[RMDB]
RNA sequence: GGGAACGACUCGAGUAGAGUCGAAAAGAUCUGGUUGGGUGAUCGCGACGGCGUGCGCAUCCCGAUGCAGUGGACACCGGACCGCAACGCGGGUUUCUCCACCGCCAACCCGGGUCGGCUGUACCUGCGGGCUGUGUCACUUCGGUGACACAGCCCGAAAAGAAACAACAACAACAAC
Reactivity to 2A3 in 0.01 (KOAc 150mM, MgCl2 10mM, bicine 150mM(pH8.5), 24C), signal-to-noise 1, nucleotides 027 to 126: g010a000u040c010u020g000g080u000u040g060g000g050u200g020a140u110c000g000c020g030a190c000g130g020c000g000u100g000c000g120c020a020u000c040c000c020g040a170u180g070c010a000g000u020g140g020a010c020a070c010c060g040g000a120c030c080g010c000a010a010c130g000c000g080g150g000u000u290u000c110u010c000c110a040c020c000g000c010c020a050a110c040c000c000g000g010g030u020c050g100g050c110u030g000u000a030c020c020u020g140